[RMDB]
RNA sequence: GGGAACGACUCGAGUAGAGUCGAAAAAGAGAACCAGAGAAUUGCCACUACUGACAUAUUCUCCCAUGUCACCAGCCUUAUGGCGUUCUCGAAACGCUGCAGAUUACCGUGACUGUCAAGCCUGUUGAGUUUUAUACCAUUUCGAUGGUAUAAAACUAAAAGAAACAACAACAACAAC
Reactivity to 2A3 in 0.01 (KOAc 150mM, MgCl2 10mM, bicine 150mM(pH8.5), 24C), signal-to-noise 9, nucleotides 027 to 126: a000g130a000g020a040a050c080c070a020g010a000g030a060a120u180u300g030c010c000a040c060u150a030c050u050g030a010c020a030u090a100u100u040c050u000c010c010c000a020u050g020u010c020a030c070c030a030g080c020c030u200u150a100u150g010g000c010g010u010u010c040u020c030g030a030a020a010c050g010c020u060g000c010a020g010a240u050u110a060c030c040g060u070g080a050c010u020g050u100c060a060a020g040c010c030u050g010u060u090g060
Reactivity to DMS in 0.01 (KOAc 150mM, MgCl2 10mM, bicine 150mM(pH8.5), 24C), signal-to-noise 6, nucleotides 027 to 126: a050g000a130g000a100a140c100c050a090g000a050g000a030a050u010u020g010c000c020a080c120u010a070c190u010g010a050c040a020u020a100u010u010c040u000c010c020c020a080u010g000u010c030a080c080c090a050g000c130c070u010u030a090u020g000g010c020g000u000u000c010u020c090g020a070a040a050c090g020c020u010g020c070a060g010a080u010u010a080c110c070g000u010g020a040c040u010g010u010c060a090a110g000c060c080u000g020u020u010g000

The record gives the reactivity of an RNA of 177 nucleotides to 2A3 and DMS. 2A3 adducts were read by reverse transcription with SuperScript II with manganese. For 2A3, 9,843 sequencing reads were counted. The reactions ran in a buffer of 150 mM KOAc, 10 mM MgCl2 and 150 mM bicine (pH 8.5), at 24 C. It was measured as part of the RMDB library OK1LIB.